[RMDB]
RNA sequence: GGGAACGACUCGAGUAGAGUCGAAAAAUACAAAGACUAGAAGAUUUGCUAUUGAGAACGUCACGAGAGAUACGAGUGAUAGGAAUUUGCACAAUACCGACGAAUUACUAUGGCGCUAACUCCAGACCUACCGGUUUAGUUUCGACUAAACCGGUAGAAAAGAAACAACAACAACAAC
Reactivity to 2A3 in 0.01 (KOAc 150mM, MgCl2 10mM, bicine 150mM(pH8.5), 24C), signal-to-noise 2, nucleotides 027 to 126: a000u130a050c020a010a110a010g010a040c040u080a060g030a150a050g000a180u020u060u020g010c040u020a040u100u170g050a090g030a120a010c070g010u000c060a030c100g160a160g010a010g040a060u080a210c060g020a020g040u070g060a010u000a010g030g000a000a090u000u050u100g040c060a030c030a160a080u070a220c050c040g090a140c050g020a050a010u090u000a010c020u000a050u060g000g000c000g010c040u010a040a020c040u000c010c010a030g030a100c030
Reactivity to DMS in 0.01 (KOAc 150mM, MgCl2 10mM, bicine 150mM(pH8.5), 24C), signal-to-noise 3, nucleotides 027 to 126: a060u010a090c050a030a040a080g020a080c090u000a080g030a160a150g000a070u010u010u000g000c110u000a080u000u000g000a100g020a060a150c110g010u010c030a050c070g000a210g020a060g010a110u010a050c100g000a130g030u010g010a030u000a040g010g020a030a070u000u000u000g000c070a020c090a060a090u010a060c150c070g000a140c070g000a050a030u000u010a080c010u000a010u010g020g000c020g000c050u010a040a050c060u000c010c040a090g000a080c160

The record gives the reactivity of an RNA of 177 nucleotides to 2A3 and DMS. Conditions: 150 mM KOAc, 10 mM MgCl2 and 150 mM bicine (pH 8.5), 24 C. The DMS profile rests on 1,473 reads.